Chemical mapping of a 177-nucleotide RNA with DMS and 2A3. For DMS the reverse transcriptase was MarathonRT. Values cover nucleotides 27 to 126. The RNA was probed in 150 mM KOAc, 10 mM MgCl2 and 150 mM bicine (pH 8.5) at 24 C.
RNA sequence: GGGAACGACUCGAGUAGAGUCGAAAAGACAGAUCUAAAAAGGUUAACUUUCAGCGAUUGUUCUAAAAUUUCAUUUGAUGGUUACAAAACGCUAGCCAUUUUUUCGCCACACCUAACCGAAUUAUCCCUAUCCCUCUAGAUUCGUCUAGAGGGAUAGAAAAGAAACAACAACAACAAC
Reactivity to DMS in 0.01 (KOAc 150mM, MgCl2 10mM, bicine 150mM(pH8.5), 24C), signal-to-noise 5, nucleotides 027 to 126: g010a080c130a080g020a050u010c040u010a060a080a100a100a080g000g010u000u010a060a110c040u010u000u010c150a100g020c100g000a050u000u000g000u020u000c080u000a030a040a070a090u000u020u000c130a100u000u010u000g000a030u000g010g010u000u010a020c050a080a040a090a140c270g030c300u000a030g000c010c000a020u000u000u000u000u000u000c040g010c070c020a090c190a080c130c020u010a030a060c060c020g000a070a090u010u000a080u000c040c040
Reactivity to 2A3 in 0.01 (KOAc 150mM, MgCl2 10mM, bicine 150mM(pH8.5), 24C), signal-to-noise 4, nucleotides 027 to 126: g050a010c040a050g110a060u020c030u170a080a050a030a030a020g040g030u080u040a060a100c000u040u150u130c030a020g030c010g070a060u000u090g050u120u050c050u060a040a090a130a190u140u240u120c080a070u090u060u150g010a020u010g000g020u030u010a000c020a060a300a190a020c180g010c080u020a020g000c010c000a000u010u010u000u020u030u070c020g030c000c020a020c000a020c040c010u020a040a010c030c000g030a030a020u090u040a030u120c000c010
For 2A3 the reverse transcriptase was SuperScript II with manganese. The 2A3 profile rests on 3,564 reads.